The record gives the reactivity of an RNA of 177 nucleotides to DMS and 2A3. Reactivities are given for positions 27 through 126. For 2A3 the reverse transcriptase was SuperScript II with manganese.
RNA sequence: GGGAACGACUCGAGUAGAGUCGAAAAGAUAUGGAGAGUCGACAUGCUCUAAGACUCGGAAACGAGUCGAUGAGCAACAGCGAGCUCUCCUAAGUCAAAGUGCACGACACUUCGGUGUCGUGCACAAUCCUACUCACAUGUUCGCAUGUGAGUAGGAAAAAGAAACAACAACAACAAC
Reactivity to DMS in 0.01 (KOAc 150mM, MgCl2 10mM, bicine 150mM(pH8.5), 24C), signal-to-noise 3, nucleotides 027 to 126: g000a040u010a300u010g010g000a010g020a010g010u010c000g000a060c110a220u000g000c010u000c020u010a130a290g000a010c010u000c000g000g000a060a080a200c010g000a010g020u000c000g000a120u020g000a040g000c000a020a050c260a100g000c010g000a080g000c000u000c000u000c000c010u000a020a060g020u000c030a130a120a130g010u000g000c000a000c000g000a000c000a010c000u000u020c190g030g000u000g010u000c010g050u000g000c000a000c010a010a070
Reactivity to 2A3 in 0.01 (KOAc 150mM, MgCl2 10mM, bicine 150mM(pH8.5), 24C), signal-to-noise 2, nucleotides 027 to 126: g020a010u050a040u160g010g000a010g010a010g030u050c000g030a220c060a120u090g000c000u020c000u010a080a040g010a010c010u000c010g000g000a080a100a020c010g010a000g030u010c010g000a020u030g000a010g000c010a000a000c030a010g050c010g020a070g130c010u000c000u000c000c010u050a140a010g030u000c040a140a060a010g040u030g020c000a020c020g050a010c020a010c000u100u150c270g100g000u000g000u000c000g000u000g000c000a000c010a000a000
The reactions ran in a buffer of 150 mM KOAc, 10 mM MgCl2 and 150 mM bicine (pH 8.5), at 24 C.
DMS adducts were read by reverse transcription with MarathonRT.